RNA sequence: GGGAACGACUCGAGUAGAGUCGAAAAGAUAUGGACCCUAGUACUUCGAUAAGCGUCUCGGAAACGAGGACGCUUUUGACGAAGGACCGGGUCCUAAGUCAAACUUAAUCGGUUCGCCGAUUAAGAACAUUAGAGUGCACUUCGGUGCACUCUAAUGAAAAGAAACAACAACAACAAC
Reactivity to DMS in 0.01 (KOAc 150mM, MgCl2 10mM, bicine 150mM(pH8.5), 24C), signal-to-noise 3, nucleotides 027 to 126: g000a050u010a300u000g010g010a010c010c000c010u010a040g030u000a080c000u000u000c000g030a070u000a010a010g000c010g000u000c000u000c010g000g010a100a130a190c000g000a030g010g010a030c010g010c000u000u000u000u000g000a140c140g000a030a000g000g000a080c270c220g010g000g030u000c000c000u010a010a070g000u000c030a090a130a140c000u000u000a010a000u000c000g010g020u010u020c240g020c010c010g000a010u000u000a000a020g000a110a200
Reactivity to 2A3 in 0.01 (KOAc 150mM, MgCl2 10mM, bicine 150mM(pH8.5), 24C), signal-to-noise 1, nucleotides 027 to 126: g020a020u040a030u180g000g000a010c020c000c010u000a010g060u020a000c000u020u000c010g040a050u020a140a020g000c000g030u000c020u010c020g030g040a090a100a060c000g110a030g090g120a020c000g100c040u040u010u010u020g040a020c000g010a000a010g020g000a000c000c020g010g010g000u000c000c000u000a040a000g030u000c040a020a000a050c000u000u000a000a000u000c010g000g110u050u090c260g000c090c040g000a010u000u000a000a010g010a030a000
The record gives the reactivity of an RNA of 177 nucleotides to DMS and 2A3.
2A3 adducts were read by reverse transcription with SuperScript II with manganese.
The reactions ran in a buffer of 150 mM KOAc, 10 mM MgCl2 and 150 mM bicine (pH 8.5), at 24 C.
2A3 is a SHAPE reagent: it acylates the 2'-hydroxyl of flexible nucleotides of all four kinds.